[RMDB]
RNA sequence: GGGAACGACUCGAGUAGAGUCGAAAAUGCGGGGGUAACGUACCUUCACCAACUACAUCGUUGUCGAGUACGUGAUAGAAAUAGUAACGGAACCUGAUAAAGACCGAUUCUGAAUGCCGAGUUUUGGCCUUCAGGUAAAGGAAUCGCUCUUCUCCGCGACGGAACACUAUUUCGAUAGUGUUCCGUCAAAAGAAACAACAACAACAAC
Reactivity to DMS in 0.01 (KOAc 150mM, MgCl2 10mM, bicine 150mM(pH8.5), 24C), signal-to-noise 2, nucleotides 027 to 156: u000g020c060g010g050g000g030g020u000a040a020c040g020u000a110c010c010u000u000c070a120c150c020a030a120c010u000a160c080a300u000c140g030u010u010g000u000c090g010a080g000u000a040c020g000u000g010a250u000a140g020a070a100a070u000a070g010u020a170a150c040g020g000a100a090c080c000u020g010a090u020a040a030a040g010a010c040c020g010a040u000u000c040u010g000a050a210u000g000c020c010g020a210g010u000u000u000u020g000g000c000c010u000u000c000a090g000g050u010a050a090a300g010g000a040a030u010c010g000c050u020c050u010u000c060u000c010c010g020c080
Reactivity to 2A3 in 0.01 (KOAc 150mM, MgCl2 10mM, bicine 150mM(pH8.5), 24C), signal-to-noise 2, nucleotides 027 to 156: u240g000c000g000g010g000g000g010u000a050a000c000g010u000a010c000c030u000u010c030a030c100c020a060a010c020u200a060c050a120u190c090g100u070u070g010u000c030g050a030g040u010a020c010g000u020g010a050u020a090g040a000a090a000u100a040g080u020a060a040c010g060g000a040a040c010c010u060g080a170u200a210a030a010g000a000c000c000g000a000u000u040c000u040g040a160a100u040g000c020c020g080a120g060u090u160u230u250g050g040c040c030u060u080c030a050g000g000u010a060a000a000g000g020a020a020u020c030g020c040u010c000u070u050c000u000c000c020g040c080
The data come from the RNA Mapping Database (RMDB), library OK3TST. An RNA of 207 nucleotides, treated with DMS and 2A3 and read out base by base.